[RMDB]
RNA sequence: GGGAACGACUCGAGUAGAGUCGAAAACGCACUCGCAGCUUAAUAACCUGCGCUGAGCCGUUCUCCCCCAGCUUGCCUGUGUCCUAGGGAAUUGGAAGGUCAUCCUUCACAGGAUCGUGUGGAAGUCAUUACUCGUGAGUGUUCGCACUCACGAGAAUCUUACUAGGGUGUUCGCACCCUAGUAAGAAAAAGAAACAACAACAACAAC
Reactivity to DMS in 0.01 (KOAc 150mM, MgCl2 10mM, bicine 150mM(pH8.5), 24C), signal-to-noise 2, nucleotides 027 to 156: c040g050c060a100c050u000c000g020c030a090g000c030u000u000a080a200u010a090a130c270c000u000g000c000g000c100u000g000a010g000c010c000g040u010u020c010u010c020c020c000c000c030a080g000c040u010u010g050c000c030u000g010u010g020u000c020c040u030a100g020g030g030a110a140u000u010g000g020a070a090g030g000u010c090a170u000c000c040u000u000c030a130c090a140g030g010a040u010c070g000u010g000u020g010g010a100a250g010u030c040a100u010u000a150c000u000c020g000u010g000a000g020u010g010u000u010c300g050c020a020c000u000c000a000c000g000a000g020a020a020
Reactivity to 2A3 in 0.01 (KOAc 150mM, MgCl2 10mM, bicine 150mM(pH8.5), 24C), signal-to-noise 2, nucleotides 027 to 156: c050g000c030a080c020u010c020g000c000a010g000c000u040u060a050a010u040a050a010c010c000u000g030c030g060c180u050g020a010g070c060c040g060u070u010c080u020c040c030c000c000c000a030g010c030u090u100g040c010c000u040g020u010g030u150c020c050u040a050g000g020g080a020a060u120u050g050g020a080a040g030g000u110c060a020u070c000c000u080u060c030a030c000a060g030g000a050u040c060g050u030g000u060g070g040a040a090g030u060c010a070u030u140a110c000u000c000g000u010g000a000g000u000g000u020u030c070g030c130a000c010u000c000a000c000g000a000g000a000a000

The record gives the reactivity of an RNA of 207 nucleotides to DMS and 2A3. Reactivities are given for positions 27 through 156. The DMS profile rests on 2,766 reads.